[RMDB]
The record gives the reactivity of an RNA of 170 nucleotides to 2A3 and DMS. 2A3 adducts were read by reverse transcription with SuperScript II with manganese.
RNA sequence: GGGAACGACUCGAGUAGAGUCGAAAAUCCUGGCUUACAGGGAAUGCUAUCCAAGGGUUUGCCUGUGGAUGUGGGGCAUCAUAUACAGCUAAUGAUGUCGAAGUCCAAUCAUCUGGCAUGAUUAAGCGAAGCUACAGGUUCGCCUGUAGCAAAAGAAACAACAACAACAAC
Reactivity to 2A3 in 0.01 (KOAc 150mM, MgCl2 10mM, bicine 150mM(pH8.5), 24C), signal-to-noise 9, nucleotides 027 to 129: u010c010c000u000g060g000c000u010u020a020c020a020g020g000g050a040a020u100g140c020u080a100u200c080c060a110a130g060g010g010u060u040u080g300c000c000u020g010u020g010g010a020u040g070u130g100g190g000g000c000a000u010c000a000u110a020u050a120c110a040g090c080u180a160a020u010g010a000u000g000u010c010g020a070a010g020u000c000c000a000a010u010c010a010u020c050u160g180g010c090a010u020g010a030u030u020a010a000g010c030g040a190a030
Reactivity to DMS in 0.01 (KOAc 150mM, MgCl2 10mM, bicine 150mM(pH8.5), 24C), signal-to-noise 9, nucleotides 027 to 129: u010c000c000u030g020g020c030u020u020a050c020a000g010g020g010a050a040u030g040c030u010a110u050c140c150a110a080g000g000g010u020u020u020g070c000c000u000g030u020g000g000a000u030g010u050g060g060g020g030c020a010u010c000a000u020a110u050a140c230a130g040c150u010a130a030u020g000a000u020g000u000c000g030a110a210g000u040c020c010a040a040u000c030a010u010c050u050g050g020c120a040u000g000a020u010u010a020a020g010c040g000a120a090

The data come from the RNA Mapping Database (RMDB), library 15KLIB. For DMS, 96,419 sequencing reads were counted. Conditions: 150 mM KOAc, 10 mM MgCl2 and 150 mM bicine (pH 8.5), 24 C.